[RMDB]
Source information
The record gives the reactivity of an RNA of 177 nucleotides to 2A3 and DMS. For 2A3, 5,446 sequencing reads were counted. For DMS, 10,214 sequencing reads were counted.

RNA sequence: GGGAACGACUCGAGUAGAGUCGAAAACUGACGCGGCCGGCCGCGGCCGAUGCGGCGCCUGUCAGGAAGGAGGCCGACAUGAUGGAGUGGCUGGCGCAGCUUCCUGGCGCCUGCCCUGGCCUGGACGCACAUCUAACUCUUUCGAGAGUUAGAUGUGAAAAGAAACAACAACAACAAC
Reactivity to 2A3 in 0.01 (KOAc 150mM, MgCl2 10mM, bicine 150mM(pH8.5), 24C), signal-to-noise 3, nucleotides 027 to 126: c010u020g030a020c050g100c190g130g080c070c150g260g030c010c030g040c000g080g000c040c080g080a080u200g000c010g020g000c010g000c000c010u050g030u100c020a000g010g070a020a040g090g080a020g010g000c010c020g040a080c030a130u260g040a100u170g060g090a090g050u180g030g000c050u020g010g000c000g000c020a020g010c010u090u060c010c020u010g040g000c010g010c000c010u030g000c000c020c010u020g010g000c000c010u020g020g040a020c050g000
Reactivity to DMS in 0.01 (KOAc 150mM, MgCl2 10mM, bicine 150mM(pH8.5), 24C), signal-to-noise 6, nucleotides 027 to 126: c020u000g000a040c060g010c190g010g030c120c210g050g030c010c020g020c140g020g020c150c170g000a060u010g020c030g010g020c020g000c010c020u000g010u000c070a040g000g000a110a070g000g000a080g010g010c000c000g010a120c110a070u010g020a130u010g000g000a150g020u000g010g010c010u010g000g000c000g010c020a050g000c130u000u000c030c020u000g010g000c010g010c010c000u000g010c000c010c040u010g000g010c000c010u010g010g010a120c180g000